[RMDB]
The record gives the reactivity of an RNA of 207 nucleotides to 2A3 and DMS. High 2A3 reactivity points to a flexible backbone, as in loops and unpaired stretches. For DMS the reverse transcriptase was MarathonRT. The 2A3 profile rests on 861 reads.
RNA sequence: GGGAACGACUCGAGUAGAGUCGAAAAGCUAGUCGGAGACGACUAGCCUCGAUCAGUUCGCUGAUCGUCUGGAUGUCUGUUGCCGUCACCAGCAUCCUUUUUGCGUGGCCGUGACGGGUACUGUAAAAUCAGGAUAAUUAAUUAAUGAAGCCGCGCCACUGCCUAAUGCUUUCGAGCAUUAGGCAGUAAAAGAAACAACAACAACAAC
Reactivity to 2A3 in 0.01 (KOAc 150mM, MgCl2 10mM, bicine 150mM(pH8.5), 24C), signal-to-noise 1, nucleotides 027 to 156: g000c000u000a000g000u000c010g000g040a060g010a100c020g010a000c000u000a000g000c000c020u040c030g000a000u000c000a000g030u080u080c120g030c110u000g000a010u000c000g040u030c070u090g040g000a000u000g200u110c000u000g000u070u140g120c020c000g010u010c000a000c000c000a010g000c000a000u020c010c010u080u150u020u130u130g030c020g000u020g000g030c000c070g050u080g000a000c000g030g000g000u070a010c000u000g000u010a000a020a070a260u230c000a000g030g020a020u060a090a040u160u190a070a120u170u070a020a070u160g060a050a000g010c000c010g030c000g000c010c020
Reactivity to DMS in 0.01 (KOAc 150mM, MgCl2 10mM, bicine 150mM(pH8.5), 24C), signal-to-noise 1, nucleotides 027 to 156: g030c000u000a000g000u000c020g010g000a300g000a160c020g020a050c010u000a040g040c000c030u020c010g050a030u010c010a060g010u000u000c300g020c050u000g010a020u000c000g030u010c060u010g030g030a100u000g020u000c020u000g060u000u000g010c050c150g000u030c030a130c220c030a040g010c030a050u010c050c020u040u000u020u020u000g050c040g040u000g000g030c140c030g020u010g010a020c000g010g000g010u000a030c000u000g000u000a120a070a140a300u010c000a050g000g010a140u000a060a050u010u010a050a260u020u000a080a150u000g010a120a100g010c000c010g020c010g040c010c300